[RMDB]
RNA sequence: GGGAACGACUCGAGUAGAGUCGAAAAUACACAAAAGUGUGUAUAAAGCAGAAGUUAGAACAGUUGAGUUAGAGAAUAGGGUAGCUGAGAAUGAGUUUAGUUGAGCUGAGGACAAAUUUGUUAAUUCUAUUAGUACGCUAUUCGUAGCGUACUAAUAAAAAGAAACAACAACAACAAC
Reactivity to DMS in 0.01 (KOAc 150mM, MgCl2 10mM, bicine 150mM(pH8.5), 24C), signal-to-noise 9, nucleotides 027 to 126: u000a010c010a010c010a080a120a130a150g020u010g020u010g000u000a020u000a070a080a100g020c060a070g010a090a070g000u000u010a060g010a070a060c080a080g010u000u000g010a090g020u010u010a050g000a090g010a050a060u010a050g000g000g020u000a040g010c040u000g000a070g000a050a050u010g000a080g000u010u010u010a070g010u000u000g010a070g010c030u010g000a070g000g010a060c120a030a050a100u020u010u000g000u000u010a080a160u000u010c060
Reactivity to 2A3 in 0.01 (KOAc 150mM, MgCl2 10mM, bicine 150mM(pH8.5), 24C), signal-to-noise 3, nucleotides 027 to 126: u030a000c010a000c010a040a100a120a070g300u160g000u000g000u010a020u050a080a110a010g020c030a010g010a130a000g050u050u170a050g010a100a040c030a010g010u030u020g080a020g020u030u060a020g010a010g030a150a060u060a050g010g050g000u040a040g010c040u030g020a010g040a050a070u090g040a040g040u060u040u070a030g000u030u080g050a010g000c010u040g030a020g010g000a030c030a010a070a030u080u020u020g020u020u030a080a110u060u020c010